[RMDB]
RNA sequence: GGGAACGACUCGAGUAGAGUCGAAAACGCAACGAGGAAGGAGCCCCGAAUGAUCGUCCACUACGCGCCCGAGGUGCAGGACCGCCGCGAGCUGGACAGCUUCGUGCGCAAGGUCUACGACGAGCACAGCGCCGCCGGUGAUCGCCUGUCGCGCAGCCAAUAUCAUUGAUUUCGAUCAAUGAUAUUGAAAAGAAACAACAACAACAAC
Reactivity to DMS in 0.01 (KOAc 150mM, MgCl2 10mM, bicine 150mM(pH8.5), 24C), signal-to-noise 3, nucleotides 027 to 156: c060g000c030a130a090c030g010a070g000g030a130a120g010g000a160g010c040c040c020c020g010a110a080u000g010a080u010c070g010u010c020c060a070c030u010a080c070g040c060g000c020c030c030g030a080g020g030u000g020c070a150g000g000a050c020c030g030c030c030g020c040g000a080g000c030u000g030g020a130c050a110g030c010u000u010c000g060u000g010c060g000c030a130a110g040g000u000c010u010a060c000g000a060c020g010a060g010c020a100c060a080g020c040g020c030c040g000c050c030g040g010u000g010a050u000c040g030c010c000u000g010u010c050g010c030g030c040a110g000c060
Reactivity to 2A3 in 0.01 (KOAc 150mM, MgCl2 10mM, bicine 150mM(pH8.5), 24C), signal-to-noise 5, nucleotides 027 to 156: c060g020c050a060a050c050g030a040g060g020a030a040g010g030a030g030c010c010c020c010g070a060a090u140g030a060u040c010g030u030c030c000a050c070u170a020c060g010c010g010c020c030c020g050a060g040g000u040g010c070a050g020g070a030c000c010g010c000c010g070c030g030a050g000c030u120g030g120a080c050a040g000c000u100u080c010g010u030g000c050g000c050a090a090g040g000u000c040u080a040c050g050a010c000g020a010g020c030a020c020a070g030c030g020c030c020g010c020c030g000g010u050g030a110u100c040g040c040c010u040g010u070c020g000c010g000c020a010g020c000